The record gives the reactivity of an RNA of 207 nucleotides to 2A3. Values cover nucleotides 27 to 156.
[RMDB]
RNA sequence: GGGAACGACUCGAGUAGAGUCGAAAAGACGUAAUCCGCGCAAAUCCACAAACGCCAACGAUGAGCGUUUCGCUGUAGCCCCUUAAGGCAACAGCCGGGGCCGCCUGAGCCCUGUUACCAAAGACGGGAAACUCGAUGCCAUUCGUGGCAUCGAGAAUGGUUUAACCACUUUCGAGUGGUUAAACCAAAAAGAAACAACAACAACAAC
Reactivity to 2A3 in 0.01 (KOAc 150mM, MgCl2 10mM, bicine 150mM(pH8.5), 24C), signal-to-noise 1, nucleotides 027 to 156: g020a010c000g010u040a040a030u060c110c020g040c010g000c080a010a020a070u120c100c000a160c090a160a050a010c030g000c000c000a110a000c120g070a200u130g010a040g050c030g040u020u090u090c050g010c000u000g010u000a020g030c010c000c000c030u070u180a070a010g000g000c010a030a000c000a060g000c000c000g000g010g000g000c000c020g050c010c000u010g000a000g020c000c000c000u020g040u090u060a010c000c030a000a000a050g140a060c020g000g010g000a070a010a000c000u020c000g000a000u000g010c010c010a000u070u060c130g110u050g000g010c020a010u000c000g000a000g000a000a010
For 2A3, 698 sequencing reads were counted.